[RMDB]
RNA sequence: GGGAACGACUCGAGUAGAGUCGAAAAUUAUAUGUAUGUAGCGAAGCAAUACUAAAAGAGGGUAGCCCCUCUUGUGGAUGUAAUCUAAUAUAUGAUGGUAGUUUUUCAGGUAAAAAGAUACCAGGGAAUACCAGUAGGGUUUCGACCCUACUGGUAUAAAAGAAACAACAACAACAAC
Reactivity to DMS in 0.01 (KOAc 150mM, MgCl2 10mM, bicine 150mM(pH8.5), 24C), signal-to-noise 4, nucleotides 027 to 126: u010u040a050u020a040u020g000u010a040u010g010u000a050g010c100g000a160a150g000c030a080a050u050a080c050u020a050a020a010a010g000a010g000g000g000u000a280g030c300c020c000c010u000c000u000u010g000u010g000g050a080u000g010u010a070a180u010c030u000a030a050u030a050u010a020u000g000a060u010g000g040u010a040g000u000u000u000u010u000c060a140g020g000u050a010a050a030a060a060g000a120u000a020c010c010a090g010g000g020a110
Reactivity to 2A3 in 0.01 (KOAc 150mM, MgCl2 10mM, bicine 150mM(pH8.5), 24C), signal-to-noise 2, nucleotides 027 to 126: u220u140a100u030a050u140g020u010a050u110g080u060a000g000c020g110a110a000g030c000a020a130u130a140c010u030a020a000a300a000g000a000g010g090g000u100a040g090c030c000c000c000u000c000u030u060g000u030g030g010a030u030g060u030a060a060u010c020u010a110a000u000a040u080a050u090g020a010u040g040g030u000a010g010u020u050u000u050u070c060a090g120g080u110a020a020a020a010a020g140a060u060a020c030c000a010g160g000g000a050